[RMDB]
RNA sequence: GGGAACGACUCGAGUAGAGUCGAAAAACCGAGGGCCUGCUCCGGCGCGAUGUAUUGGGCGGUGCCCAUCACCAUGCCGGUCUGGGUCACGGGCGCUGCAUCGACGGCUUUGGCGAUGCCGAAGUCGAAGUGAAUAUACAUUCGUGUAUAUUCACUUAAAAGAAACAACAACAACAAC
Reactivity to DMS in 0.01 (KOAc 150mM, MgCl2 10mM, bicine 150mM(pH8.5), 24C), signal-to-noise 8, nucleotides 027 to 126: a090c010c000g010a150g000g000g020c010c000u000g000c130u000c000c030g000g000c000g010c070g000a040u010g000u040a090u020u020g010g000g010c010g020g000u060g010c010c000c010a020u010c040a020c040c010a050u010g000c000c000g000g000u000c140u010g000g000g020u010c020a050c060g000g000g010c060g000c030u000g000c080a070u020c080g000a300c010g000g000c000u000u000u010g000g000c010g010a190u060g020c010c000g000a010a020g010u010c000g000
Reactivity to 2A3 in 0.01 (KOAc 150mM, MgCl2 10mM, bicine 150mM(pH8.5), 24C), signal-to-noise 9, nucleotides 027 to 126: a000c070c000g010a280g020g010g010c010c010u030g010c040u030c020c010g010g000c010g000c050g040a070u060g050u200a140u110u150g030g010g000c220g140g100u300g010c000c010c000a000u020c000a000c010c010a030u120g000c000c000g020g000u030c060u110g030g000g010u020c020a010c020g010g010g000c070g010c030u110g020c020a110u100c060g080a060c010g000g000c000u010u010u010g030g000c130g170a160u300g000c010c000g010a000a000g000u010c010g020
Chemical mapping of a 177-nucleotide RNA with DMS and 2A3. For 2A3, 37,644 sequencing reads were counted. The reactions ran in a buffer of 150 mM KOAc, 10 mM MgCl2 and 150 mM bicine (pH 8.5), at 24 C.